[RMDB]
RNA sequence: GGGAACGACUCGAGUAGAGUCGAAAAGAUAUGGAGCGACGUAGAAAAGCGGUAGAGCAACAGCCACACCGCUCGGAAACGAGCGUUGUGGACAUGCUUGUUCGCUUUUCUACGUCGCUCCUAAGUCGUUAAAAUAGUCGUUCGCGACUAUUUUAACAAAAGAAACAACAACAACAAC
Reactivity to DMS in 0.01 (KOAc 150mM, MgCl2 10mM, bicine 150mM(pH8.5), 24C), signal-to-noise 2, nucleotides 027 to 126: g000a100u010a300u010g020g000a020g030c000g020a020c000g010u020a010g020a040a030a010a030g010c020g020g020u000a210g010a030g000c000a030a070c300a200g000c000c000a000c000a020c050c000g000c000u000c000g000g000a070a070a230c000g010a000g010c000g010u000u000g010u000g000g010a020c080a120u000g010c000u000u000g020u000u000c000g000c000u020u000u000u000c010u010a000c010g000u000c000g000c010u010c000c000u000a000a060g010u000c070

The record gives the reactivity of an RNA of 177 nucleotides to DMS. Reactivities are given for positions 27 through 126. Source: RMDB library TTRINS, as collected in RNAgym. For DMS, 2,065 sequencing reads were counted.